[RMDB]
RNA sequence: GGGAACGACUCGAGUAGAGUCGAAAAGGUCUGAUCUUCGGAUCAGACCAACUCUGAUUCCCAAUAGCUGCGUAUCUUGGCUAAGACGGAAAGGCGUUGCCACUCAGGGGGGUUUCGACCCCCCUAAUUGGAGACGAGUAUUCGUACUCGUCUCCAAAAAAGAAACAACAACAACAAC
Reactivity to DMS in 0.01 (KOAc 150mM, MgCl2 10mM, bicine 150mM(pH8.5), 24C), signal-to-noise 1, nucleotides 027 to 126: g000g010u010c000u010g010a010u010c010u000u020c220g050g010a020u000c000a010g000a000c010c010a010a050c040u010c070u010g000a140u000u010c000c000c010a080a250u000a010g010c020u000g000c170g020u000a040u030c090u010u020g010g000c010u010a010a040g000a140c140g000g020a040a100a120g010g010c010g010u000u000g000c010c020a170c230u010c180a030g020g000g000g030g020g000u000u000u010c120g020a030c000c000c000c030c000c000u000a000a050